[RMDB]
RNA sequence: GGGAACGACUCGAGUAGAGUCGAAAAUUUAAAGUAACUUAUCGAUGGAAGCGAAACUCUGCAAAGGAACGUCAGACCGCUACCAGAAAGGGGGUGAAGUCAGGACUUACUGGUGAUUAUUGUCCAAGGACACAUUUAAGCAGAUAGUUUUGAAAUACGAUACGACCGAUUUCGAUCGGUCGUAUCGAAAAGAAACAACAACAACAAC
Reactivity to 2A3 in 0.01 (KOAc 150mM, MgCl2 10mM, bicine 150mM(pH8.5), 24C), signal-to-noise 1, nucleotides 027 to 156: u140u120u010a060a080a000g000u010a050a110c020u080u060a060u300c050g020a040u070g000g000a010a020g000c000g080a080a000a000c000u000c000u000g040c010a100a060a110g060g040a100a020c010g100u070c010a000g030a010c070c000g050c020u030a040c100c000a150g050a140a080a030g030g000g040g000g000u030g020a040a010g030u030c030a040g000g030a030c010u010u070a020c000u130g060g030u100g140a040u020u200a100u120u060g000u000c000c040a060a050g080g000a000c040a000c000a030u000u030u120a050a050g030c070a000g010a160u100a020g000u010u000u000u090g010a040a040a040u090a010